[RMDB]
RNA sequence: GGGAACGACUCGAGUAGAGUCGAAAACAUGGAGUCUUCGGACUCCAUGCACUACCGAAAUAAAGCCUCGGUAUAAAAGGCAAACCCUUGGAAACAAGGGAACGAUGUCACGAUUCGUCGUGACAAAUAGUCCCUAAGGGUUCGCCCUUAGGGACUAAAAAGAAACAACAACAACAAC
Reactivity to DMS in 0.01 (KOAc 150mM, MgCl2 10mM, bicine 150mM(pH8.5), 24C), signal-to-noise 1, nucleotides 027 to 126: c000a020u000g010g000a010g010u000c000u000u000c090g000g000a010c000u000c000c000a000u000g000c050a120c070u020a070c010c010g000a160a110a180u020a060a080a270g010c100c010u000c000g000g020u000a040u020a010a030a050a010g000g000c000a060a070a120c030c000c010u000u000g020g010a170a120a180c070a080a020g000g000g010a030a030c230g010a160u020g000u000c000a000c000g010a010u000u000c260g010u000c000g000u010g010a000c000a000a020a060
Reactivity to 2A3 in 0.01 (KOAc 150mM, MgCl2 10mM, bicine 150mM(pH8.5), 24C), signal-to-noise 1, nucleotides 027 to 126: c020a000u000g000g000a000g000u010c040u070u050c220g000g010a020c000u000c000c000a000u000g030c000a030c010u060a000c000c000g040a090a080a030u150a040a070a000g010c010c010u000c030g000g010u070a030u150a190a070a000a010g030g020c010a020a050a060c010c000c000u000u010g010g000a030a020a010c000a020a010g000g000g000a020a020c020g050a070u110g000u010c000a000c010g030a010u010u040c180g050u000c000g000u060g000a010c000a000a020a000